[RMDB]
RNA sequence: GGGAACGACUCGAGUAGAGUCGAAAAGCUUUUAGUUCACAUUCAUUAGCACACACAAGAGGCAGUUAGAGUUGCUUCAAGUUUUCAGCUUCAGCUUGCCACAUUCACAGCCACAGCGCAGAGUUGCUUGCGCCAAGAGUUAGCAUUAGGCGCGCAGCGGAUGUGGAAGGUUCGCCUUCCACAUCCGAAAAGAAACAACAACAACAAC
Reactivity to 2A3 in 0.01 (KOAc 150mM, MgCl2 10mM, bicine 150mM(pH8.5), 24C), signal-to-noise 4, nucleotides 027 to 156: g030c020u020u050u070u160a060g030u140u140c070a030c010a090u060u070c020a020u070u140a030g010c040a030c010a000c000a010c020a080a090g010a050g050g000c040a020g020u060u180a070g010a020g080u070u050g020c000u060u040c040a080a040g040u070u010u100u120c030a020g010c040u070u040c040a040g010c010u020u090g050c040c000a030c010a050u100u070c050a020c010a100g010c000c010a040c000a040g000c010g000c060a010g040a030g070u080u050g030c040u070u110g000c010g000c010c000a070a010g030a020g090u110u090a010g010c010a050u090u050a000g030g000c040g000c020g000c040a030g080
Reactivity to DMS in 0.01 (KOAc 150mM, MgCl2 10mM, bicine 150mM(pH8.5), 24C), signal-to-noise 2, nucleotides 027 to 156: g000c090u000u010u020u010a130g030u000u010c050a070c060a240u000u000c040a100u000u000a100g050c030a100c100a090c050a120c050a070a230g000a110g020g000c020a060g020u010u010a040g010a220g010u020u000g010c050u010u030c100a090a170g030u000u000u010u000c070a120g050c050u000u000c070a070g030c030u000u010g010c050c060a050c030a070u000u000c080a090c030a120g000c000c020a040c080a110g010c010g020c040a060g020a160g040u000u010g000c010u000u000g040c010g000c000c040a060a130g000a120g030u020u000a060g020c070a110u000u000a130g020g040c030g020c080g080c080a120g020